[RMDB]
RNA sequence: GGGAACGACUCGAGUAGAGUCGAAAACACGAACGAUGCGGCCAUGCCGAUCCGAAGCUGGCCGUGCCGGCGCGCGACAUCGUCGAUGAGAUAUGUAAGCCCUUGUGGUACAGGAGUUUUAGAACGACCUCCAACAGUGGUUCGCCACUGUUGGAGGAAAAGAAACAACAACAACAAC
Reactivity to DMS in 0.01 (KOAc 150mM, MgCl2 10mM, bicine 150mM(pH8.5), 24C), signal-to-noise 1, nucleotides 027 to 126: c110a130c080g000a100a090c020g040a010u020g010c000g000g000c020c020a060u010g060c000c010g030a140u010c260c040g050a180a110g000c020u000g020g000c020c010g000u000g000c020c000g020g000c100g000c040g020c030g000a120c060a040u020c140g000u000c000g010a090u010g020a180g000a030u000a040u000g010u000a060a090g010c010c000c060u000u020g020u000g020g000u000a070c120a030g010g020a190g020u000u000u000u000a110g000a100a050c130g030a250